[RMDB]
Record summary: Chemical mapping of a 177-nucleotide RNA with 2A3 and DMS. Source: RMDB library OK1LIB, as collected in RNAgym. 2A3 adducts were read by reverse transcription with SuperScript II with manganese.
RNA sequence: GGGAACGACUCGAGUAGAGUCGAAAAGUGAUUUUUCCAAACCUAUUCAUCUCCUCGUUAGUAUAUUCGGCUCGGGUCUAUUUCAAUGGGUCCCAUUGAGAUGGACAUGCCCCGCCCGGGGCCGCCAGGAUCAUUACGUGUUCGCGCGUAGUGGUCCAAAAGAAACAACAACAACAAC
Reactivity to 2A3 in 0.01 (KOAc 150mM, MgCl2 10mM, bicine 150mM(pH8.5), 24C), signal-to-noise 9, nucleotides 027 to 126: g160u130g110a180u050u030u030u070u060c030c010a070a050a060c030c020u060a070u060u070c020a040u020c040u020c020c000u010c020g070u050u040a070g070u070a070u050a060u170u120c030g010g000c020u020c020g090g000g000u000c000u010a010u000u020u010c000a010a010u020g030g070g190u140c060c040c000a000u000u020g010a020g000a010u010g010g000a010c010a030u060g010c000c000c000c000g060c010c030c020g010g000g020g000c000c000g020c010c020a030
Reactivity to DMS in 0.01 (KOAc 150mM, MgCl2 10mM, bicine 150mM(pH8.5), 24C), signal-to-noise 7, nucleotides 027 to 126: g010u020g010a060u010u010u010u010u000c020c030a080a090a100c090c030u020a080u010u010c040a040u000c030u010c010c000u000c040g000u010u000a070g010u020a090u020a080u020u010c030g000g010c020u010c050g010g010g000u000c000u000a010u000u000u000c020a010a000u000g010g000g010u020c190c010c010a050u000u010g000a010g000a010u000g000g000a010c020a080u020g000c010c000c000c040g000c100c030c090g000g000g000g010c010c050g010c160c070a110